Chemical mapping of a 177-nucleotide RNA with 2A3 and DMS. As a SHAPE reagent, 2A3 marks flexible, mostly unpaired nucleotides at the ribose 2'-OH. For DMS the reverse transcriptase was MarathonRT. The 2A3 profile rests on 1,907 reads.
RNA sequence: GGGAACGACUCGAGUAGAGUCGAAAAGAAAAUCCCAAGGAUAGCAUAGCAUAGCAUAGCAUAGCAUAGCAUAGCAUAGCAUAGCAUAGCAUAGCAUAGCAUAGCAUAGCAUAGCAUACAAAAAAAAGAAUAACCAAGGUUUCGACCUUGGUUAUUCAAAAGAAACAACAACAACAAC
Reactivity to 2A3 in 0.01 (KOAc 150mM, MgCl2 10mM, bicine 150mM(pH8.5), 24C), signal-to-noise 2, nucleotides 027 to 126: g090a010a090a000a020u010c010c000c030a020a000g140g030a100u150a050g010c020a040u090a040g060c000a020u020a030g020c000a000u060a010g010c000a030u060a020g000c010a020u040a030g000c010a020u050a020g010c010a050u040a020g030c010a050u070a030g040c010a020u040a030g010c020a030u060a020g030c020a040u020a030g000c020a030u050a020g030c020a040u050a010g000c000a000u040a040g020c020a010u050a070c120a090a170a030a000a000a000a010a020
Reactivity to DMS in 0.01 (KOAc 150mM, MgCl2 10mM, bicine 150mM(pH8.5), 24C), signal-to-noise 2, nucleotides 027 to 126: g050a120a120a130a090u000c010c000c000a110a140g000g010a110u020a110g000c030a040u000a060g000c040a050u000a030g000c000a040u000a050g010c000a060u000a060g020c050a010u000a050g010c090a030u010a100g000c030a030u000a050g000c030a070u000a050g040c080a070u000a060g000c040a030u000a110g030c030a050u030a030g030c030a040u000a050g010c060a060u000a060g010c030a030u000a070g000c010a030u010a030c050a040a010a020a010a060a020a120a110